[RMDB]
RNA sequence: GGGAACGACUCGAGUAGAGUCGAAAACCAAACUCAACCGGGUCGGCCUGCCUGAACUCCAAAGGGACUGCACGUAUGCCCCUACACUCCUUGAUCUUGGAGCGCAACCCCACAUAUCCAUGCAGCUUGACAACCAGUGUCGCCCAUGAUGACACUCCCUAUCAUAACCGUUCGCGGUUAUGAUAGGAAAAGAAACAACAACAACAAC
Reactivity to 2A3 in 0.01 (KOAc 150mM, MgCl2 10mM, bicine 150mM(pH8.5), 24C), signal-to-noise 2, nucleotides 027 to 156: c030c010a090a040a080c050u050c010a020a050c000c010g000g020g050u020c000g020g070c010c000u010g000c010c040u070g130a070a060c020u040c060c040a090a040a030g050g020g040a110c030u070g000c050a010c150g120u180a070u280g030c000c000c000c000u040a010c010a000c040u080c000c010u060u110g080a090u140c030u050u090g060g000a000g000c010g030c060a040a040c000c020c050c000a030c020a070u100a010u070c020c020a020u040g030c010a010g030c010u060u090g050a070c000a030a060c060c000a050g040u000g000u030c020g000c030c010c020a090u190g000a090u110g010a010c000a010c040u000c000